[RMDB]
RNA sequence: GGGAACGACUCGAGUAGAGUCGAAAAGGAUGCAACGUAGUAAUAUGUGUGACAACUAGCUCUUGAGUUACACAUUACUAGUCGUAAUGCGAUUCAAGAGCUAUUUCGCGUUACGACAUCUGUAUCGCUACAUCAGACUAUUCGUAGUUUGAUGUAGAAAAGAAACAACAACAACAAC
Reactivity to 2A3 in 0.01 (KOAc 150mM, MgCl2 10mM, bicine 150mM(pH8.5), 24C), signal-to-noise 3, nucleotides 027 to 126: g040g000a000u010g010c020a040a030c080g060u050a050g050u010a040a090u130a300u300g050u000g000u050g060a300c130a060a000c080u020a050g000c000u000c000u000u000g000a000g010u020u110a020c010a000c000a010u010u010a010c010u020a020g030u030c010g010u010a000a000u010g000c010g010a010u050u060c010a010a000g010a010g030c010u020a060u010u000u000c000g000c000g000u000u010a010c010g020a010c000a020u040c070u050g020u020a020u020c010g000
Reactivity to DMS in 0.01 (KOAc 150mM, MgCl2 10mM, bicine 150mM(pH8.5), 24C), signal-to-noise 2, nucleotides 027 to 126: g010g000a000u000g020c020a030a110c300g020u010a000g000u000a020a030u000a150u000g000u000g000u000g000a220c300a000a000c050u000a300g000c000u000c000u000u000g000a010g000u000u000a030c030a020c010a020u000u000a000c010u000a060g010u000c050g000u000a000a000u000g000c010g000a030u000u000c010a000a010g000a010g000c010u010a020u000u000u000c010g010c020g010u010u000a010c010g010a030c010a050u000c120u000g020u000a010u000c020g000

Source information: Conditions: 150 mM KOAc, 10 mM MgCl2 and 150 mM bicine (pH 8.5), 24 C. This 177-nucleotide RNA was probed chemically with 2A3 and DMS. For DMS, 22,320 sequencing reads were counted. The 2A3 profile rests on 29,133 reads. 2A3 adducts were read by reverse transcription with SuperScript II with manganese.